[RMDB]
An RNA of 207 nucleotides, treated with 2A3 and read out base by base. Source: RMDB library M2RFPK, as collected in RNAgym.

RNA sequence: GGGAACGACUCGAGUAGAGUCGAAAAACAAUUGGUGGUAGUCCGCCACUCUAAGGGGACGCCUUUAGAAGAAGAGGCUAGGGGGUAUUCCGGUGUGGGAUACUUAGUAAUAUGCAACGCUAAUUGCUCAAGGAUAGAUGAUUCGUCAUCUAUCCAAUGUGACAAGUAGGUUCGCCUACUUGUCACAAAAAGAAACAACAACAACAAC
Reactivity to 2A3 in 0.01 (KOAc 150mM, MgCl2 10mM, bicine 150mM(pH8.5), 24C), signal-to-noise 1, nucleotides 027 to 156: a000c040a000a070u070u030g000g000u010g040g120u030a020g050u010c010c030g000c000c000a120c050u020c000u000a050a070g000g000g020g060a060c050g190c000c000u100u060u000a030g020a060a000g000a030a010g020a090g010g000c000u020a060g000g000g010g000g000u020a020u030u050c050c000g300g000u150g090u120g110g000g000a020u030a020c000u000u090a040g010u040a040a100u100a060u220g060c000a030a030c060g020c040u130a060a150u030u110g030c020u020c140a080a120g000g000a000u000a020g000a000u020g000a000u050u110c130g060u030c060a000u020c000u000a000u000c000c010a000a000